[RMDB]
RNA sequence: GGGAACGACUCGAGUAGAGUCGAAAAGUAAAGAAAGCAACGGGGCUAGCCGUCAGGUGUUCCUCCCCCCGAGAGGGGAAGAGUGAGGCUUAUCCCGGGGAACUCGGCGAAUCGUCCCCGCAUGGCAGUUAUGGAGAUAGUUCGCUAUCUCCAUAACAAAAGAAACAACAACAACAAC
Reactivity to 2A3 in 0.01 (KOAc 150mM, MgCl2 10mM, bicine 150mM(pH8.5), 24C), signal-to-noise 1, nucleotides 027 to 126: g010u050a000a070a140g040a060a120a000g020c040a000a050c000g020g000g000g020c010u020a010g010c010c010g060u050c020a080g150g000u110g030u110u010c000c010u010c050c000c000c010c000c010g120a080g030a080g050g000g000g010a020a000g010a020g060u120g050a030g060g020c010u020u060a030u060c000c050c000g020g000g000g010a000a000c010u010c040g000g000c010g000a020a050u060c030g070u030c000c010c000c000g000c010a030u120g080g000c040a050
Reactivity to DMS in 0.01 (KOAc 150mM, MgCl2 10mM, bicine 150mM(pH8.5), 24C), signal-to-noise 2, nucleotides 027 to 126: g000u030a070a140a120g000a120a060a150g020c020a070a120c010g010g000g000g000c070u000a090g020c070c000g020u010c110a070g010g010u010g000u010u000c010c020u000c000c050c000c000c000c030g010a170g010a180g000g030g020g010a030a080g010a100g010u000g020a200g000g000c090u010u000a060u010c040c010c010g000g000g010g020a070a050c040u000c040g010g020c020g000a050a080u000c080g010u000c000c010c020c000g000c090a040u000g020g000c060a120